[RMDB]
RNA sequence: GGGAACGACUCGAGUAGAGUCGAAAAGAAGGCAUCAAGGCGCGCGUGAUUCGCUGCUUUAAAUCUUCCGACGUGGCGUUCGUCGCCGUUGAAGGUAACCGCCUGAGCGGAUCCGGCAUCUCCAUCGCCGUAUCACGCUGUUCGCAGCGUGAUACGGAAAAGAAACAACAACAACAAC
Reactivity to DMS in 0.01 (KOAc 150mM, MgCl2 10mM, bicine 150mM(pH8.5), 24C), signal-to-noise 1, nucleotides 027 to 126: g050a120a020g010g000c080a100u000c160a060a000g010g000c000g030c100g000c050g000u010g000a100u010u000c130g050c000u000g040c000u000u000u000a060a070a000u020c030u000u080c020c000g030a060c000g040u010g020g000c010g030u050u010c160g060u040c070g030c010c010g020u000u060g000a000a000g010g000u020a100a120c100c080g000c030c140u000g050a130g060c080g000g000a090u060c020c010g000g030c080a070u030c080u000c070c160a030u030c180g000
Reactivity to 2A3 in 0.01 (KOAc 150mM, MgCl2 10mM, bicine 150mM(pH8.5), 24C), signal-to-noise 3, nucleotides 027 to 126: g110a010a020g060g000c000a090u060c110a080a120g080g000c020g010c030g020c020g030u110g080a100u060u060c000g000c070u100g020c010u050u100u060a090a240a030u030c040u050u020c030c070g040a020c090g060u110g030g040c050g010u070u160c120g050u180c030g000c020c030g000u000u040g020a060a030g040g010u070a050a080c060c020g030c020c060u080g010a010g000c010g000g020a010u030c020c000g010g020c000a040u010c010u000c060c010a130u050c070g010